This 177-nucleotide RNA was probed chemically with 2A3 and DMS. DMS adducts were read by reverse transcription with MarathonRT.
RNA sequence: GGGAACGACUCGAGUAGAGUCGAAAACAGCAGUAGCCUACGGCAGGUGCAUAACCAGUAAUGGUCUUGUACUAAGCUGCUCGGACAAUGAAGCCCUUCCGAAAGGAGAAGUUUGAACCGUGAGGGGCUUUGCCGUAAGUUUCGACUUACGGCAAAGAAAAGAAACAACAACAACAAC
Reactivity to 2A3 in 0.01 (KOAc 150mM, MgCl2 10mM, bicine 150mM(pH8.5), 24C), signal-to-noise 7, nucleotides 027 to 126: c020a000g030c020a010g010u160a020g020c000c030u130a120c100g020g000c010a020g010g010u010g000c010a020u030a050a030c010c010a030g060u150a050a200u030g000g000u020c010u010u010g000u000a010c010u050a060a060g020c000u010g000c010u020c030g030g030a050c050a050a100u190g030a040a010g020c000c000c000u020u000c020c010g080a110a060a030g110g040a090g040a110a080g100u100u140u230g050a090a050c030c020g050u110g030a040g000g000g000g000
Reactivity to DMS in 0.01 (KOAc 150mM, MgCl2 10mM, bicine 150mM(pH8.5), 24C), signal-to-noise 9, nucleotides 027 to 126: c190a040g000c020a020g020u000a080g010c020c010u040a110c170g010g040c030a270g000g000u000g000c000a010u010a140a010c000c010a010g010u050a150a080u000g000g010u010c080u020u010g010u000a000c000u010a080a160g010c000u000g000c010u000c060g010g010a110c180a070a090u030g010a090a080g010c000c000c000u020u000c000c020g000a060a120a180g010g000a060g010a070a080g010u010u000u010g020a140a140c090c020g000u030g010a080g010g000g010g010